[RMDB]
RNA sequence: GGGAACGACUCGAGUAGAGUCGAAAAGGAUGCUGCUCUGACAGAAACGUACUCCCCUCCACCUGAUGGAGGUUGUGGGGUACACUGCUUGUAUGCCAUCUCUGAGCACCGCGCCACCAAGCAGUGGUAUGUAUCUAGUGUUCGCACUAGAUACAUAAAAAGAAACAACAACAACAAC
Reactivity to 2A3 in 0.01 (KOAc 150mM, MgCl2 10mM, bicine 150mM(pH8.5), 24C), signal-to-noise 9, nucleotides 027 to 126: g040g010a030u040g020c030u010g000c010u030c040u110g060a090c020a030g080a140a170a030c090g010u010a010c020u020c010c000c020c000u000c010c000a050c010c070u250g090a300u100g080g030a010g020g030u050u130g090u090g020g000g000g000u010a010c000a010c000u010g020c010u040u040g040u070a060u180g020c040c010a040u020c070u000c030u080g050a030g040c030a020c070c020g020c040g000c020c000a030c000c010a080a030g020c050a020g050u020g020g020
Reactivity to DMS in 0.01 (KOAc 150mM, MgCl2 10mM, bicine 150mM(pH8.5), 24C), signal-to-noise 9, nucleotides 027 to 126: g000g000a050u000g010c070u000g010c020u000c060u010g010a110c050a040g000a060a070a120c240g010u000a020c020u000c010c010c000c000u000c000c000a050c070c190u010g010a170u010g010g000a030g000g010u010u000g010u010g020g010g010g010u000a020c000a080c030u000g010c020u000u000g010u000a070u000g010c040c030a050u000c030u000c050u000g000a100g010c080a130c050c040g010c110g000c020c010a050c070c030a070a090g010c100a070g010u000g000g010